RNA sequence: GGGAACGACUCGAGUAGAGUCGAAAAGCUCUGGAAUUGAGGCCCCUCUAACAAUAAUCCAAAACUACUUCGCAGAGUAAUCUGCCGAAUCGUAGGAUGCCCAUUACUAUCUAUUGUUGGAGCAUCUAAAACUGUCAGUGCUUCGGCACUGACAGAAGUUAUAAUGACGGUUCGCCGUCAUUAUAACAAAAGAAACAACAACAACAAC
Reactivity to 2A3 in 0.01 (KOAc 150mM, MgCl2 10mM, bicine 150mM(pH8.5), 24C), signal-to-noise 4, nucleotides 027 to 156: g030c000u000c010u030g070g140a210a130u080u070g010a040g050g030c010c000c020c000u020c030u040a030a020c010a010a030u090a020a040u080c090c090a050a110a040a050c000u020a010c000u000u010c000g010c010a010g000a010g040u090a120a180u010c000u010g040c060c060g010a010a000u070c050g010u010a020g020g010a020u070g040c010c040c010a060u140u080a060c040u070a060u180c030u040a070u050u020g010u000u000g000g010a030g020c010a020u050c030u130a030a040a050a120c010u000g000u000c000a000g010u000g000c000u030u020c050g090g000c010a000c000u000g010a000c000a000g000a000a000
Reactivity to DMS in 0.01 (KOAc 150mM, MgCl2 10mM, bicine 150mM(pH8.5), 24C), signal-to-noise 3, nucleotides 027 to 156: g030c040u000c010u000g010g080a170a160u000u000g000a050g020g000c020c020c040c020u000c030u010a050a090c020a080a040u010a030a140u000c070c070a020a110a200a220c020u000a020c030u000u000c020g050c010a040g010a030g010u020a170a150u000c000u000g060c050c040g030a010a030u010c120g000u010a030g000g000a090u000g030c020c030c130a200u000u000a090c070u010a090u010c090u000a080u000u000g000u000u000g000g000a120g020c080a070u000c020u000a010a050a120a180c020u010g000u000c000a020g030u000g020c010u000u010c280g060g000c000a010c010u000g000a000c010a000g020a010a080